[RMDB]
RNA sequence: GGGAACGACUCGAGUAGAGUCGAAAAAGUUCGCGCUUCCGUGAAACACGAAAAUCGGACGGUGGCUGCAAGUCGCAUCGCAAAACCGCGGCAAGUGGAGUUAGCGAGAGGAGGCUGGGUUUUGGCUAGAACACACGGUACUUCGGUACCGUGUGAAGUCAUUACCUAGAUUCGUCUAGGUAAUGACAAAAGAAACAACAACAACAAC
Reactivity to DMS in 0.01 (KOAc 150mM, MgCl2 10mM, bicine 150mM(pH8.5), 24C), signal-to-noise 2, nucleotides 027 to 156: a110g010u010u000c030g040c060g000c080u000u000c020c100g000u000g020a150a080a080c020a040c040g000a030a030a040a110u000c050g000g010a090c010g020g050u000g020g050c020u000g000c040a080a140g020u000c030g030c040a200u000c010g060c040a050a070a140a130c040c060g000c020g000g000c050a060a110g090u000g000g000a120g020u000u000a140g010c050g000a070g010a120g010g000a060g020g000c030u000g020g020g010u010u000u000u000g000g000c040u000a140g000a070a230c010a010c010a010c000g020g000u000a010c010u000u010c300g040g010u010a010c000c010g040u070g000u000g020a000a060
Notes
An RNA of 207 nucleotides, treated with DMS and read out base by base.